[RMDB]
RNA sequence: GGGAACGACUCGAGUAGAGUCGAAAAGACGCACUGGAAUCAAUACAGAAGAGUCAGGGUGCCAAGAAGCAGUGGAAGCUGAACGCAGACACCAGUUCAAGGCUGACAUUCCUAGAUGCGCACAUGAAAAUGCUUUCAAAAGCUGAGGAGACGGGGACAUUUUAGGCGGUUUCGACCGCCUAAAAUGAAAAGAAACAACAACAACAAC
Reactivity to DMS in 0.01 (KOAc 150mM, MgCl2 10mM, bicine 150mM(pH8.5), 24C), signal-to-noise 1, nucleotides 027 to 156: g020a080c020g010c030a030c010u030g030g040a050a150u000c050a070a160u000a250c150a110g010a110a020g000a130g010u000c020a050g000g000g000u020g030c000c090a010a280g000a080a070g070c040a050g000u010g040g010a120a200g000c000u010g020a050a080c040g070c060a040g000a160c030a030c010c110a200g020u000u000c010a080a140g020g020c030u030g000a080c060a030u000u000c010c020u000a090g010a160u060g020c010g060c060a020c110a100u010g020a080a080a060a090u000g000c020u000u000u000c090a040a170a060a130g000c030u030g000a000g000g020a140g000a090c040g000g020g000g030a120
Reactivity to 2A3 in 0.01 (KOAc 150mM, MgCl2 10mM, bicine 150mM(pH8.5), 24C), signal-to-noise 1, nucleotides 027 to 156: g040a000c020g000c000a010c000u000g000g060a040a040u090c060a070a020u110a240c100a050g150a160a010g010a150g040u050c050a060g130g000g050u080g020c040c010a050a000g030a030a010g000c030a000g010u030g030g030a070a000g020c050u120g100a140a010c110g000c030a010g070a030c000a030c000c070a030g000u000u010c020a020a010g050g000c000u000g020a000c010a040u030u000c020c000u020a050g020a110u070g000c030g030c000a060c030a120u160g070a000a030a060a000u080g000c000u060u080u080c060a080a050a030a030g000c000u010g010a050g030g000a030g000a030c030g000g000g000g050a000
The record gives the reactivity of an RNA of 207 nucleotides to DMS and 2A3. For 2A3, 688 sequencing reads were counted. Values cover nucleotides 27 to 156. For DMS the reverse transcriptase was MarathonRT. For DMS, 1,304 sequencing reads were counted. 2A3 adducts were read by reverse transcription with SuperScript II with manganese.